Record summary:
Source: RMDB library TTRDEL, as collected in RNAgym. This 177-nucleotide RNA was probed chemically with DMS and 2A3. The DMS profile rests on 2,462 reads. High 2A3 reactivity points to a flexible backbone, as in loops and unpaired stretches. The 2A3 profile rests on 2,067 reads. DMS adducts were read by reverse transcription with MarathonRT.
RNA sequence: GGGAACGACUCGAGUAGAGUCGAAAAGAUAUGGAAUGGUCAGAGCGACGAUCUCUUUCGGAAACGAACGGGAGGGAGCUCUACAUUCCUAAGUCAAAAGACGGUUGUCCUUCGGGACAACCGUCAACAAAUGCCUAACGUUCGCGUUAGGCAUUUGAAAAGAAACAACAACAACAAC
Reactivity to DMS in 0.01 (KOAc 150mM, MgCl2 10mM, bicine 150mM(pH8.5), 24C), signal-to-noise 3, nucleotides 027 to 126: g000a020u010a250u000g000g010a010a020u010g000g010u010c280a020g010a030g010c000g010a160c190g000a050u000c000u000c000u000u000u000c000g020g010a050a060a070c000g000a010a020c300g010g010g000a020g000g000g020a110g000c000u000c000u000a060c010a010u000u000c000c000u010a020a080g000u030c010a100a110a170a120g000a030c000g010g010u000u000g000u000c000c000u000u010c200g030g000g000a010c000a000a000c000c000g010u000c010a010a070
Reactivity to 2A3 in 0.01 (KOAc 150mM, MgCl2 10mM, bicine 150mM(pH8.5), 24C), signal-to-noise 1, nucleotides 027 to 126: g030a010u010a000u040g020g000a000a010u030g050g170u300c260a000g000a000g020c010g300a300c060g050a160u030c010u030c000u070u050u010c000g000g040a020a030a020c000g010a080a030c100g110g040g010a020g030g020g010a050g000c000u000c030u000a000c000a000u000u000c000c000u010a020a020g040u000c010a070a020a000a300g010a000c000g000g000u000u000g000u000c000c000u090u200c300g030g010g030a000c000a000a000c000c000g020u010c000a020a000